An RNA of 177 nucleotides, treated with DMS and 2A3 and read out base by base. The RNA was probed in 150 mM KOAc, 10 mM MgCl2 and 150 mM bicine (pH 8.5) at 24 C.
RNA sequence: GGGAACGACUCGAGUAGAGUCGAAAACAGAUUCACGGCCCGGACAUCUCGUCCAUCACGGCUCGCCCAAUCAGGCCAGCCGUGGCCGCCGACCCUACAGGGUUGCGCCGGCCUCCGGGUUGCACACUUAAGACUACACAUUCGUGUGUAGUCUUAAAAAAGAAACAACAACAACAAC
Reactivity to DMS in 0.01 (KOAc 150mM, MgCl2 10mM, bicine 150mM(pH8.5), 24C), signal-to-noise 9, nucleotides 027 to 126: c120a100g010a100u040u020c090a260c080g000g020c020c010c000g010g000a040c240a060u010c080u010c160g010u020c100c150a060u000c040a010c010g000g010c010u000c300g010c000c000c070a070a120u070c290a150g000g010c000c080a000g000c000c000g010u010g000g030c010c010g000c030c000g000a010c000c000c000u070a150c300a170g000g000g010u000u000g000c120g030c050c030g030g010c010c170u000c000c000g010g000g010u000u000g010c160a110c170a080c150
Reactivity to 2A3 in 0.01 (KOAc 150mM, MgCl2 10mM, bicine 150mM(pH8.5), 24C), signal-to-noise 6, nucleotides 027 to 126: c020a020g130a160u190u180c060a030c070g010g000c000c010c000g010g000a030c030a070u080c080u050c090g160u030c050c010a030u070c010a000c000g000g010c000u010c000g010c000c000c000a040a200u160c070a020g000g010c010c030a000g000c000c000g010u010g000g010c000c000g000c000c010g000a010c010c000c000u100a150c120a180g010g000g010u010u020g050c120g010c090c100g010g000c000c010u010c000c000g000g000g000u020u040g040c080a070c010a000c030